[RMDB]
RNA sequence: GGGAACGACUCGAGUAGAGUCGAAAAUUGAAGGAGGGGUCAUCAGGAUCGAUGUUCAGCGUUCCGUUGAAUUUUAACUCUAGGGUGUGGAAUAGAUGCACUCGUGUUCUAGGGCGGAAAAUCCGACCCGGGUAAAGGAGUUCGCUCCUUUACCCGGAAAAGAAACAACAACAACAAC
Reactivity to DMS in 0.01 (KOAc 150mM, MgCl2 10mM, bicine 150mM(pH8.5), 24C), signal-to-noise 1, nucleotides 027 to 126: u010u000g030a110a100g030g010a080g030g000g010g010u000c040a050u000c080a110g000g010a070u010c110g000a040u000g010u010u000c020a070g000c040g000u000u010c060c020g060u010u000g010a030a040u000u030u000u000a110a120c070u010c030u000a040g000g010g020u000g000u020g030g010a140a100u000a070g020a080u010g030c070a060c010u000c050g010u000g000u000u000c080u010a060g000g000g000c060g000g000a070a060a080a100u000c000c010g000a170c080